[RMDB]
RNA sequence: GGGAACGACUCGAGUAGAGUCGAAAAGCGCAACGGCUGGGUGUAACCCAACUCUAGGUGUGCUGAUUAGCGGGCUUGACUCCGUAACAAAUAGGCACUGGUGGUAAAAAGCAUCCCACCUACUCACAAAGCUCCAAAUUCUUCGGAAUUUGGAGAACAUUCGCAACUUGUUCGCAAGUUGCGAAUGAAAAGAAACAACAACAACAAC
Reactivity to DMS in 0.01 (KOAc 150mM, MgCl2 10mM, bicine 150mM(pH8.5), 24C), signal-to-noise 1, nucleotides 027 to 156: g030c020g000c000a020a050c030g000g000c020u000g000g010g020u020g030u000a030a300c020c020c020a030a020c010u000c010u030a080g010g030u020g060u000g010c010u000g020a080u020u000a080g040c040g050g020g040c080u000u000g000a110c110u020c030c000g010u000a040a230c050a050a040a150u000a080g010g040c020a030c070u000g050g010u000g000g010u000a060a090a080a150a170g020c060a100u000c070c010c000a040c080c010u000a040c060u000c020a090c080a080a110a210g000c050u000c000c000a020a030a050u000u000c000u000u030c060g000g020a040a000u020u010u000g000g000a000g000a020a030
Reactivity to 2A3 in 0.01 (KOAc 150mM, MgCl2 10mM, bicine 150mM(pH8.5), 24C), signal-to-noise 3, nucleotides 027 to 156: g040c020g000c030a020a020c040g060g000c020u020g040g000g000u090g090u100a100a120c010c010c000a010a030c010u070c060u080a060g030g030u040g020u030g080c020u010g020a140u020u080a010g020c000g000g020g030c040u100u130g020a080c030u000c090c000g010u020a040a000c020a020a090a040u180a040g050g000c030a020c130u090g030g020u030g030g020u080a120a150a020a000a060g030c000a020u050c030c000c000a020c000c010u010a050c020u030c040a070c040a060a140a020g020c010u000c000c000a000a000a000u000u000c000u020u050c100g040g000a000a000u010u000u000g000g000a000g000a000a000